[RMDB]
RNA sequence: GGGAACGACUCGAGUAGAGUCGAAAAAAGAAUCCUUGGAGGAAGCGUAAACCAUCUUUGCUCUGACUGGAGCGGUGUCUGGGGACCAAGUGAAAAAGACAAUUUUGGAUCUUUUACCUUCACCACCCUUAGGUAGACGAUUCGUCGUCUACCUAAGAAAAGAAACAACAACAACAAC
Reactivity to 2A3 in 0.01 (KOAc 150mM, MgCl2 10mM, bicine 150mM(pH8.5), 24C), signal-to-noise 3, nucleotides 027 to 126: a000a000g070a010a020u030c010c000u020u030g020g000a060g030g050a040a020g030c010g050u060a050a040a040c020c010a050u030c040u090u100u110g030c030u000c020u040g130a220c100u180g030g000a030g040c020g000g020u050g020u010c070u060g040g010g040g000a020c010c010a090a030g060u090g130a100a030a010a010a000g020a020c030a080a110u100u120u070u100g080g010a070u010c020u010u100u010u050a040c000c000u030u030c010a030c060c010a050c020c020
Reactivity to DMS in 0.01 (KOAc 150mM, MgCl2 10mM, bicine 150mM(pH8.5), 24C), signal-to-noise 5, nucleotides 027 to 126: a080a070g000a150a090u010c010c010u000u010g010g000a180g010g000a070a030g000c140g030u010a030a060a060c080c050a050u010c030u010u010u000g010c020u000c010u000g010a150c220u020g010g010a040g020c020g000g010u010g000u000c050u010g010g010g010g000a140c110c100a060a060g010u010g010a040a030a030a040a030g010a050c050a050a090u010u000u000u000g010g000a060u000c020u000u000u000u000a070c040c010u000u000c050a060c040c020a090c100c090